[RMDB]
This 177-nucleotide RNA was probed chemically with DMS and 2A3. It was measured as part of the RMDB library OK1LIB. For 2A3 the reverse transcriptase was SuperScript II with manganese.
RNA sequence: GGGAACGACUCGAGUAGAGUCGAAAACGUAGGGUUGGCAGAGCGAGUGUAGGAGUAGCCCUUCGCCUGGUAGCUGUCGAUCGACUCCUGCACGAACGUGGUGGACUGGUAGAUCGGGGUGAGGAUGGAGUAUGGAUCGGUUCGCCGAUCCAUACUCAAAAGAAACAACAACAACAAC
Reactivity to DMS in 0.01 (KOAc 150mM, MgCl2 10mM, bicine 150mM(pH8.5), 24C), signal-to-noise 1, nucleotides 027 to 126: c100g000u030a110g020g020g030u000u000g030g000c070a070g000a150g020c010g000a180g000u030g010u000a050g010g000a090g000u000a080g030c070c000c100u010u010c020g010c060c000u010g000g010u010a050g020c040u000g000u020c040g000a040u030c090g020a090c000u000c000c000u000g000c010a000c020g000a030a080c090g000u000g010g010u000g020g000a130c130u000g010g000u000a030g010a070u030c060g000g010g000g030u000g000a160g030g000a070u070g000
Reactivity to 2A3 in 0.01 (KOAc 150mM, MgCl2 10mM, bicine 150mM(pH8.5), 24C), signal-to-noise 3, nucleotides 027 to 126: c070g070u150a090g080g050g020u080u120g050g040c050a010g000a040g090c060g030a060g060u000g030u020a020g000g010a000g000u010a020g040c050c000c000u050u070c000g010c030c000u040g020g080u120a020g070c080u090g050u120c010g030a130u040c030g030a030c010u010c010c000u010g040c010a000c000g040a090a010c020g010u100g010g030u030g020g070a090c040u080g100g000u020a070g030a050u050c000g000g010g010g010u050g020a050g020g030a050u160g120

The reactions ran in a buffer of 150 mM KOAc, 10 mM MgCl2 and 150 mM bicine (pH 8.5), at 24 C. DMS adducts were read by reverse transcription with MarathonRT.